[RMDB]
RNA sequence: GGGAACGACUCGAGUAGAGUCGAAAACGAUCUGCAGUUCGCUGCAGAUCGAAAACCUUUGUGAGCACGGAGGUAUAUCCCAAUUCCUCCCAUUGGGAGGAUUGAAGGAUGCGAACGUGCUCACUCUGGUAAACAGAAGAACGUUCGCGUUCUUCUGCGGAUGUAAUUCCUUCGGGAAUUACAUCCGAAAAGAAACAACAACAACAAC
Reactivity to 2A3 in 0.01 (KOAc 150mM, MgCl2 10mM, bicine 150mM(pH8.5), 24C), signal-to-noise 2, nucleotides 027 to 156: c010g010a000u020c000u060g000c000a020g030u060u120c170g140c180u010g000c020a010g000a000u010c000g020a010a000a010a000c000c010u000u000u020g000u000g000a010g020c010a000c010g020g060a080g010g120u300a150u010a030u080c000c000c020a000a010u190u120c000c000u030c000c000c090a300u180u300g010g000g000a000g000g000a010u000u030g020a110a040g020g010a020u030g000c030g020a100a040c000g050u000g000c010u000c000a000c020u000c000u010g000g030u030a110a070a070c010a010g010a000a000g010a000a000c000g020u090u090c270g050c000g140u000u000c030u000u010c000u000g000